Structure probing data (2A3) for a 207-nucleotide construct. 2A3 adducts were read by reverse transcription with SuperScript II with manganese. As a SHAPE reagent, 2A3 marks flexible, mostly unpaired nucleotides at the ribose 2'-OH. Values cover nucleotides 27 to 156. The RNA was probed in 150 mM KOAc, 10 mM MgCl2 and 150 mM bicine (pH 8.5) at 24 C.
RNA sequence: GGGAACGACUCGAGUAGAGUCGAAAAAGGGACACCUCACUCACAUUUUACCAAGAGAGUGAGAGUGAGGUUAACCUCUCAUUUCUCUUGGUGAACGCAGAAGUUAGAGGUUGAGAACACUGACAACUGCGUUCAUAGUUGUGAGUGUUCUGUCCCACUACGUAGCCAUGUUCGCAUGGCUACGUAGAAAAGAAACAACAACAACAAC
Reactivity to 2A3 in 0.01 (KOAc 150mM, MgCl2 10mM, bicine 150mM(pH8.5), 24C), signal-to-noise 3, nucleotides 027 to 156: a020g010g000g000a010c000a000c030c020u000c010a010c000u000c000a030c010a060u040u080u100u180a030c020c000a010a000g000a000g000a000g000u030g010a000g020a000g020u160g030a060g150g070u070u090a040a050c020c000u000c000u000c000a000u250u300u030c000u000c010u000u000g000g020u000g000a000a000c000g000c010a010g000a070a000g030u020u050a040g050a050g160g080u030u060g070a080g030a030a010c030a010c070u000g010a000c000a030a010c010u010g030c010g040u060u020c030a050u120a010g110u020u040g000u000g000a000g000u000g000u010u000c000u020g000u000c010c000c000a000